[RMDB]
RNA sequence: GGGAACGACUCGAGUAGAGUCGAAAAGGGAGAACCGAGCAGAGGCAUAGCGAACUGCGCACGGAGAAGCCUUGAGGGAACGCCGUAGGACCCGGGUUCGAUUCCCGGCUGCUCCACCGAAGGGCCAAUCCACGGUGGCGUUCGCGCCACCGUGGAUAAAAGAAACAACAACAACAAC
Reactivity to 2A3 in 0.01 (KOAc 150mM, MgCl2 10mM, bicine 150mM(pH8.5), 24C), signal-to-noise 1, nucleotides 027 to 126: g070g020g040a100g020a120a040c030c130g000a040g000c000a000g030a060g030g030c040a100u190a130g050c020g060a140a010c080u080g000c060g000c000a000c010g090g000a160g030a000a010g000c000c000u000u050g010a060g010g030g030a020a020c080g080c040c040g010u060a070g000g000a000c000c000c000g100g000g000u080u120c020g020a070u020u100c000c000c000g000g000c000u120g010c060u000c000c000a030c000c060g010a010a010g010g000g000c030c000a000
Reactivity to DMS in 0.01 (KOAc 150mM, MgCl2 10mM, bicine 150mM(pH8.5), 24C), signal-to-noise 2, nucleotides 027 to 126: g000g030g000a080g000a130a070c040c000g000a040g000c160a050g040a170g050g010c060a200u070a130g080c080g020a060a070c120u000g050c110g000c160a000c120g010g000a000g000a300a160g010c010c000u010u000g000a300g000g020g000a000a120c100g040c100c010g020u080a110g020g000a020c100c000c030g010g040g000u000u090c160g010a100u060u040c000c000c000g000g000c060u030g010c020u000c000c120a120c000c110g000a130a060g000g000g050c060c000a060

Overview:
The record gives the reactivity of an RNA of 177 nucleotides to 2A3 and DMS. DMS adducts were read by reverse transcription with MarathonRT. The RNA was probed in 150 mM KOAc, 10 mM MgCl2 and 150 mM bicine (pH 8.5) at 24 C. The data come from the RNA Mapping Database (RMDB), library OK1LIB. For 2A3, 552 sequencing reads were counted.